[RMDB]
Conditions: 150 mM KOAc, 10 mM MgCl2 and 150 mM bicine (pH 8.5), 24 C. Chemical mapping of a 207-nucleotide RNA with 2A3. It was measured as part of the RMDB library RNAMAK. Reactivities are given for positions 27 through 156.

RNA sequence: GGGAACGACUCGAGUAGAGUCGAAAAGGGGUCCGUGUAAGAGGCUCCUGUGGAGCAACAGCGCUACUGAAGCCUCCACGGUAGCGACAUGCUCCACCUGAGCUGGUACACGGACGGAGGCACCCAAAACGUGAGCUGUGUUCGCACAGCUCACGAACGUUGCGUUAAUGUUCGCAUUAACGCAACGAAAAGAAACAACAACAACAAC
Reactivity to 2A3 in 0.01 (KOAc 150mM, MgCl2 10mM, bicine 150mM(pH8.5), 24C), signal-to-noise 2, nucleotides 027 to 156: g030g010g030g030u030c040c120g000u000g000u010a260a260g100a090g300g010c000u000c000c000u010g020u000g000g000a000g000c080a050a140c100a170g010c010g020c020u020a010c020u030g020a080a010g020c020c030u000c000c000a010c010g000g000u000a000g010c010g100a030c020a080u300g000c000u000c010c000a000c000c020u000g000a010g000c010u050g070g070u010a000c000a000c000g000g020a010c000g000g000a000g010g000c010a020c000c050c000a040a070a000a020c010g000u010g000a000g000c000u000g000u000g030u190u130c260g050c120a010c000a000g070c000u000c000a000c000g000a010a030